[RMDB]
RNA sequence: GGGAACGACUCGAGUAGAGUCGAAAAGCUACCAUCUACGGAUGGUAGCAACGCUCAACCUCAGAGCGCAAGAGUCGAACGAAUACAGUUCGACAUGAGGAAACUGCCAGGUUACGACCUGGCAGAACAGGUGAAAAUCGUUCGCGAUUUUCACCUGAAAAGAAACAACAACAACAAC
Reactivity to 2A3 in 0.01 (KOAc 150mM, MgCl2 10mM, bicine 150mM(pH8.5), 24C), signal-to-noise 4, nucleotides 027 to 126: g020c000u000a000c010c000a000u000c000u010a040c250g150g000a000u010g010g000u000a000g000c000a010a000c000g000c000u010c010a140a080c000c000u000c000a000g000a000g000c010g030c190a160a040g010a010g070u000c000g000a000a000c000g030a090a060u300a250c090a080g000u000u000c000g000a000c000a010u010g000a000g000g040a030a010a010c000u000g000c000c000a000g000g020u050u040a050c150g030a010c020c000u000g000g000c000a000g000a000a010
Reactivity to DMS in 0.01 (KOAc 150mM, MgCl2 10mM, bicine 150mM(pH8.5), 24C), signal-to-noise 2, nucleotides 027 to 126: g000c000u000a010c000c000a000u000c000u000a140c110g000g000a000u000g020g030u000a010g000c000a080a070c000g000c000u000c000a080a040c000c000u050c000a000g000a000g000c010g070c030a110a050g030a020g070u020c020g000a010a000c030g000a250a250u030a130c230a080g010u000u040c000g020a000c000a000u010g020a000g000g060a240a150a240c000u000g000c010c000a000g000g000u000u000a170c110g000a050c000c000u000g000g000c010a000g000a020a100
The record gives the reactivity of an RNA of 177 nucleotides to 2A3 and DMS. Values cover nucleotides 27 to 126. The 2A3 profile rests on 3,797 reads. Conditions: 150 mM KOAc, 10 mM MgCl2 and 150 mM bicine (pH 8.5), 24 C. Source: RMDB library OK1LIB, as collected in RNAgym. For DMS, 2,529 sequencing reads were counted.